[RMDB]
RNA sequence: GGGAACGACUCGAGUAGAGUCGAAAAACCUUUGUGUGUGGAUGCACCAUUGUCAGACGGAGAAGAGGUCCCAUUGGGACCUCGUAACGUCUUGGAUUUAUGGUGCUACCCACACACUCUGGUAAAACUGUAUCGACUCUUCGGAGUCGAUACAGAACAAAACCUUACUGUUCGCAGUAAGGUUUUGAAAAGAAACAACAACAACAAC
Reactivity to DMS in 0.01 (KOAc 150mM, MgCl2 10mM, bicine 150mM(pH8.5), 24C), signal-to-noise 2, nucleotides 027 to 156: a050c010c000u000u000u000g000u020g060u000g000u000g000g010a020u000g000c000a020c000c000a030u000u000g030u000c030a030g000a080c000g020g040a120g010a150a290g020a030g010g020u010c010c000c010a300u010u010g060g080g010a010c010c000u000c000g000u000a060a230c020g010u010c010u010u000g020g000a040u000u000u000a000u000g010g010u000g000c000u030a010c030c010c010a050c000a000c010a000c000u000c010u000g000g030u010a040a050a130a140c000u010g010u000a020u000c000g010a040c000u000c000u000u000c270g050g000a020g000u000c010g000a000u000a010c000a000g000a090a230
Reactivity to 2A3 in 0.01 (KOAc 150mM, MgCl2 10mM, bicine 150mM(pH8.5), 24C), signal-to-noise 3, nucleotides 027 to 156: a010c000c000u010u020u000g000u000g000u000g010u000g020g000a000u010g030c000a010c000c000a010u010u020g010u020c010a020g000a010c030g010g030a030g010a030a010g010a010g000g000u020c010c010c110a260u300u300g030g000g000a000c000c000u010c010g000u010a000a000c000g010u000c010u000u070g030g010a010u160u220u160a010u020g010g010u010g000c000u000a000c000c000c000a000c010a010c000a000c000u000c000u010g000g000u020a060a030a010a090c000u000g000u000a000u010c000g000a010c010u010c030u070u120c280g040g000a000g000u000c000g000a000u000a000c000a000g000a000a000
The data come from the RNA Mapping Database (RMDB), library RNAMAK. Chemical mapping of a 207-nucleotide RNA with DMS and 2A3. For 2A3, 3,908 sequencing reads were counted. Reactivities are given for positions 27 through 156. The RNA was probed in 150 mM KOAc, 10 mM MgCl2 and 150 mM bicine (pH 8.5) at 24 C.